[RMDB]
RNA sequence: GGGAACGACUCGAGUAGAGUCGAAAACUGGCGCCGGCUGGGCAACAUUCCGAGGGGACCGUCCCCCUCGGUAAUGGCGAAUGGGACCCAGAUCUCUCUCUAGCUUCCGAUAGAGAAGCGAGAGAAAACAGGUUGAUCUUCGGAUCAACCAAAAGAAACAACAACAACAAC
Reactivity to 2A3 in 0.01 (KOAc 150mM, MgCl2 10mM, bicine 150mM(pH8.5), 24C), signal-to-noise 7, nucleotides 027 to 129: c030u010g040g000c030g010c020c000g040g010c030u020g000g030g000c020a070a020c010a030u030u000c000c000g010a010g000g010g000g010a080c050c100g110u240c020c010c000c000c000u010c000g000g000u010a020a020u020g020g030c050g070a080a070u110g020g020g020a030c000c010c000a030g010a070u030c040u010c000u000c000u000c020u050a040g000c000u000u000c010c020g240a300u150a200g110a010g000a030a000g000c000g010a000g000a000g000a030a020a000a010c100a050
Reactivity to DMS in 0.01 (KOAc 150mM, MgCl2 10mM, bicine 150mM(pH8.5), 24C), signal-to-noise 5, nucleotides 027 to 129: c000u000g000g020c000g040c000c030g010g000c050u020g050g020g040c090a240a100c040a050u000u000c020c010g000a030g020g030g050g040a060c180c220g060u080c030c000c000c000c000u010c000g020g020u050a030a030u000g030g010c110g050a150a120u000g020g000g040a100c020c010c030a020g000a150u040c060u020c020u010c040u020c010u050a050g010c020u020u000c000c030g060a200u010a180g030a120g000a020a000g020c030g000a030g000a000g000a010a010a050a020c100a090
The record gives the reactivity of an RNA of 170 nucleotides to 2A3 and DMS. For DMS, 23,963 sequencing reads were counted. DMS adducts were read by reverse transcription with MarathonRT. Source: RMDB library 15KLIB, as collected in RNAgym. The 2A3 profile rests on 24,779 reads.